[RMDB]
Structure probing data (2A3) for a 207-nucleotide construct. The RNA was probed in 150 mM KOAc, 10 mM MgCl2 and 150 mM bicine (pH 8.5) at 24 C. Values cover nucleotides 27 to 156.
RNA sequence: GGGAACGACUCGAGUAGAGUCGAAAACGGGCUCGGCCACGACCGGCUGCCGGAACUGCUCGACGCGGUCGAGGAACGACCGGUCCGGCUCUCGUUGCCGCGCUUCGCGGUGUCCGGUUCCGGCGCGUUGGACGAACCGUUCGCCGCGCUGGGAGUGCGCUCGGCUUCAGUUCGCUGAAGCCGAGCGAAAAGAAACAACAACAACAAC
Reactivity to 2A3 in 0.01 (KOAc 150mM, MgCl2 10mM, bicine 150mM(pH8.5), 24C), signal-to-noise 1, nucleotides 027 to 156: c000g000g060g000c060u000c000g000g000c000c000a010c010g000a020c010c010g000g040c070u050g000c000c000g000g010a030a020c020u050g030c020u050c060g040a070c010g000c010g070g000u050c000g010a060g030g130a110a110c150g160a170c030c000g020g110u150c110c080g000g030c010u030c010u000c030g070u060u140g000c010c000g000c000g000c060u120u080c070g000c010g000g030u070g280u010c000c020g000g000u010u010c010c000g020g000c170g020c010g100u120u170g010g020a010c020g000a010a020c000c030g010u020u040c000g000c000c000g000c000g000c000u070g050g080g000a060g010u170g140